[RMDB]
RNA sequence: GGGAACGACUCGAGUAGAGUCGAAAAAGAAAGAGAGCGUAGCACACACACAGACUAAGUCUGACACACACCUAGGCUACAUGUGUGUGUGAAGUCGAGAUAUCGACAAGUGUGUGUGAUGAAAAAAUACUCUUUUAGGUUUCGACCUAAAAGAGUAAAAAGAAACAACAACAACAAC
Reactivity to 2A3 in 0.01 (KOAc 150mM, MgCl2 10mM, bicine 150mM(pH8.5), 24C), signal-to-noise 6, nucleotides 027 to 126: a000g080a020a050a010g110a000g010a010g060c080g030u050a000g010c010a000c010a000c000a000c000a000c000a000g010a010c030u090a180a040g020u010c010u000g030a010c000a000c000a000c000a000c010c040u060a070g150g020c070u170a060c110a090u040g050u000g000u000g000u000g000u000g020a030a000g010u000c000g010a010g000a150u190a050u140c010g010a010c010a080a100g010u000g000u000g000u000g000u010g010a010u030g050a070a020a000a010a000a000
Reactivity to DMS in 0.01 (KOAc 150mM, MgCl2 10mM, bicine 150mM(pH8.5), 24C), signal-to-noise 8, nucleotides 027 to 126: a070g010a060a070a070g000a080g010a090g010c100g010u000a150g010c000a010c000a010c000a010c000a060c010a030g000a020c020u010a110a130g010u000c010u000g010a120c000a000c000a010c000a010c000c060u000a080g010g010c140u000a090c070a050u000g010u000g020u000g020u000g010u000g000a040a080g010u000c000g000a030g010a170u010a080u000c010g010a010c000a040a070g010u000g020u000g010u000g010u000g000a060u010g000a000a010a070a070a070a110